[RMDB]
RNA sequence: GGGAACGACUCGAGUAGAGUCGAAAAAGGUGGCCAGCGGCGAGGCCGGCGACGCCCUCACGGAACCCGCCGUCCGCUCGCUGGCAGAACGCGUGGCCGACCUCGCGACCGAGGCAGACGACCUGCGGUCCCAUACAAGUUUCGACUUGUAUGGGACAAAAGAAACAACAACAACAAC
Reactivity to 2A3 in 0.01 (KOAc 150mM, MgCl2 10mM, bicine 150mM(pH8.5), 24C), signal-to-noise 2, nucleotides 027 to 126: a000g110g010u070g070g000c020c000a030g040c020g050g000c040g010a100g040g020c090c020g000g000c000g020a010c040g050c020c020c020u050c040a070c050g000g010a030a060c020c010c020g000c000c010g000u000c000c030g000c010u120c070g020c010u010g000g000c000a000g000a010a010c010g010c020g030u070g020g030c040c000g070a240c020c000u000c010g040c050g060a070c090c040g010a030g030g000c010a020g030a150c050g040a060c020c010u050g010c060g050
Reactivity to DMS in 0.01 (KOAc 150mM, MgCl2 10mM, bicine 150mM(pH8.5), 24C), signal-to-noise 5, nucleotides 027 to 126: a070g000g020u000g010g010c020c010a050g010c010g010g000c040g020a080g010g010c060c030g020g000c020g020a050c120g000c300c050c030u010c200a090c150g000g000a130a300c200c060c020g000c010c000g000u000c030c050g010c010u010c030g020c010u000g000g010c010a020g000a080a120c040g000c020g020u000g010g030c010c010g010a110c010c000u000c020g000c110g010a090c120c020g000a110g000g000c030a060g010a170c060g000a090c040c010u000g010c060g010